[RMDB]
RNA sequence: GGGAACGACUCGAGUAGAGUCGAAAACCUGCUCUGCAACAAUAUUUCAUCAGUGGUGAACUCCAAAAUCUACUGGUGAAAUGUAGUUGCGUAGGAGGAAAGAAUGCAACGGUUCGCCGUUGCAUUCCGAUGUGGUACACUUCGGUGUACCACAUCGAAAAGAAACAACAACAACAAC
Reactivity to DMS in 0.01 (KOAc 150mM, MgCl2 10mM, bicine 150mM(pH8.5), 24C), signal-to-noise 2, nucleotides 027 to 126: c000c000u000g000c010u000c030u020g070c000a000a010c010a120a050u000a020u000u000u000c010a010u000c000a010g010u000g000g020u000g000a140a130c260u040c250c250a040a060a150a160u010c010u000a010c000u010g000g000u000g010a000a000a020u000g050u000a040g010u000u010g010c010g010u000a040g010g000a010g000g000a090a110a040g000a020a000u000g010c000a000a000c000g000g000u010u010c300g030c010c000g000u000u000g010c000a010u000u000c000
Reactivity to 2A3 in 0.01 (KOAc 150mM, MgCl2 10mM, bicine 150mM(pH8.5), 24C), signal-to-noise 2, nucleotides 027 to 126: c000c000u010g060c010u010c030u120g000c000a000a000c010a030a050u020a010u060u000u000c000a010u010c000a000g010u000g020g030u080g070a100a110c120u160c140c050a070a120a030a160u050c000u040a000c000u000g000g000u000g010a000a000a000u000g000u000a030g000u030u000g000c000g030u050a050g000g120a020g010g010a190a070a030g000a000a000u000g000c010a000a000c020g000g040u060u090c240g060c080c010g000u010u000g000c000a000u000u000c000